[RMDB]
RNA sequence: GGGAACGACUCGAGUAGAGUCGAAAACGGUCCGUUCGCGGACCGGCGUCCUAAGUCUUUGCAAUGACGCCCACCUUCGGUAAUACUAUCGGAAACGAUAGUGCCAGAAGAGUGGGUAAGACAGCAAAGAUAUGGAAUUCCGUCGCUUCGGCGACGGGUGAACAUUCACUUUCGAGUGAAUGUUCACAAAAGAAACAACAACAACAAC
Reactivity to 2A3 in 0.01 (KOAc 150mM, MgCl2 10mM, bicine 150mM(pH8.5), 24C), signal-to-noise 5, nucleotides 027 to 156: c010g000g010u000c010c000g020u060u100c300g010c030g070g000a000c000c000g000g010c040g080u060c000c010u030a210a050g020u000c000u000u000u010g020c050a170a300u110g040a050c060g080c000c010c000a010c010c000u000u000c010g010g010u040a170a080u070a300c000u010a000u010c000g080g010a140a050a040c000g000a000u000a010g000u000g000c000c030a010g010a010a000g210a050g000u000g000g000g000u000a000a000g010a040c040a000g050c010a030a000a000g010a000u040a060u090g050g080a030a090u250u070c030c000g010u000c010g010c010u080u070c240g100g000c020g000a000c030g000g000
Reactivity to DMS in 0.01 (KOAc 150mM, MgCl2 10mM, bicine 150mM(pH8.5), 24C), signal-to-noise 2, nucleotides 027 to 156: c010g040g000u000c010c020g020u000u000c260g040c060g000g020a030c010c010g000g000c070g000u010c010c010u010a050a300g020u000c000u000u000u000g010c000a190a080u030g010a210c150g020c000c000c000a000c000c000u000u000c020g030g040u000a110a130u000a190c000u010a000u000c000g030g010a190a170a270c030g000a010u000a010g020u000g010c030c010a150g010a010a010g000a230g060u000g000g000g030u000a000a040g010a270c010a110g020c010a000a030a000g020a030u000a240u000g010g000a090a160u000u020c000c020g020u010c000g000c000u000u010c300g000g030c010g010a000c010g000g020